[RMDB]
RNA sequence: GGGAACGACUCGAGUAGAGUCGAAAAAUCACUUGAGGUUGGGAGUUCGAGACCAGUCUGACCAACGUGGAGAAACCCCAUCUCUGCUAAAAACACAAAAUUAGCCAGGCAUGGUAGCGCAUGCCUGCUAGAGGAUGGGGUUCGCCCCAUCCUCUAGAAAAGAAACAACAACAACAAC
Reactivity to 2A3 in 0.01 (KOAc 150mM, MgCl2 10mM, bicine 150mM(pH8.5), 24C), signal-to-noise 2, nucleotides 027 to 126: a030u000c030a010c010u100u060g030a030g060g000u080u040g060g040g020a240g040u090u130c070g050a030g080a060c000c000a020g030u060c050u020g030a040c000c040a010a050c080g090u010g020g020a080g030a070a090a010c010c000c000c000a010u020c040u010c020u030g010c010u040a090a060a000a140a050c120a040c030a030a050a030a160u100u060a050g070c050c020a030g000g000c000a000u000g070g000u020a010g000c080g000c050a000u000g000c000c000u020g010
Reactivity to DMS in 0.01 (KOAc 150mM, MgCl2 10mM, bicine 150mM(pH8.5), 24C), signal-to-noise 2, nucleotides 027 to 126: a090u010c040a070c110u010u000g000a060g000g000u000u000g010g020g010a060g040u000u000c100g000a230g010a090c020c020a050g000u000c010u000g020a080c090c120a140a090c090g020u020g000g000a080g000a060a010a080c030c000c010c030a050u010c020u000c010u000g010c010u000a000a030a030a090a110c170a040c250a120a000a050a180u010u010a040g010c080c000a010g000g010c000a010u000g000g010u020a120g000c220g000c020a010u000g000c010c000u000g010